[RMDB]
RNA sequence: GGGAACGACUCGAGUAGAGUCGAAAAGUAAAGGCCGAACGAGCGCUAAUGCGCAUGCUAGAAAAUGCUAGGCCAUCGUAGUGUGAGCAUGAGCACGAAAGAAACACACACAUGCACGUGCAAAAAACCGUGUAUGUCCUUUCGAGGACAUACACGGAAAAGAAACAACAACAACAAC
Reactivity to 2A3 in 0.01 (KOAc 150mM, MgCl2 10mM, bicine 150mM(pH8.5), 24C), signal-to-noise 1, nucleotides 027 to 126: g030u050a000a150a000g010g000c020c010g020a040a030c090g030a070g100c000g000c070u180a230a100u240g020c080g000c050a020u090g030c010u050a070g240a040a080a020a020u080g000c020u000a030g000g070c000c020a020u050c020g090u010a020g010u000g020u020g010a000g020c040a050u010g060a050g030c030a010c010g050a070a020a040g080a010a080a010c110a020c030a000c000a010c000a080u060g010c050a020c080g070u000g070c020a100a090a000a000a000a000
Reactivity to DMS in 0.01 (KOAc 150mM, MgCl2 10mM, bicine 150mM(pH8.5), 24C), signal-to-noise 1, nucleotides 027 to 126: g030u000a120a140a070g010g000c030c110g000a050a120c280g000a120g020c100g040c000u000a090a160u010g000c000g000c000a060u000g000c010u000a080g010a060a050a080a090u000g000c000u000a070g010g000c010c010a070u000c080g040u000a040g070u000g030u000g000a090g000c070a010u000g020a140g000c000a070c020g000a080a020a140g000a120a010a100c050a080c110a110c060a050c050a040u000g000c000a040c090g010u000g000c110a000a000a170a020a060a080